[RMDB]
RNA sequence: GGGAACGACUCGAGUAGAGUCGAAAAUAACAAGGACACUUAUGCAGCUCUUAGAAACUCUUUAACUAAUGAUGCCUAUUCACGAUUUUUGGGGUUGUUUAACAAGUAUAAGUACUUCUCUGGUGCUACAACCAGGACUUCGGUCCUGGUAAAAGAAACAACAACAACAAC
Reactivity to 2A3 in 0.01 (KOAc 150mM, MgCl2 10mM, bicine 150mM(pH8.5), 24C), signal-to-noise 4, nucleotides 027 to 129: u070a040a030c090a040a010g070g040a020c020a000c060u000u020a030u170g000c000a000g000c030u030c010u110u090a050g070a060a060a010c040u010c010u010u100u120a110a060c070u120a130a020u060g070a050u050g070c000c010u140a170u130u060c060a040c110g150a100u020u010u010u000u160g010g010g000g000u030u010g080u080u040u020a060a010c030a080a000g000u050a020u000a090a050g030u070a010c050u080u030c050u000c040u010g030g030u020g020c020u030a030c000a020
Reactivity to DMS in 0.01 (KOAc 150mM, MgCl2 10mM, bicine 150mM(pH8.5), 24C), signal-to-noise 2, nucleotides 027 to 129: u040a130a090c110a000a000g040g010a080c020a070c110u020u020a120u040g030c000a010g030c090u000c040u000u000a000g000a020a020a020c040u040c020u000u000u000a070a100c070u000a130a100u010g020a060u030g040c100c080u020a080u010u030c070a100c200g010a000u010u000u000u000u000g000g000g000g000u000u000g020u060u050u020a070a090c060a040a050g020u030a070u060a070a050g010u010a000c000u030u020c000u000c070u030g010g020u000g020c000u040a040c130a140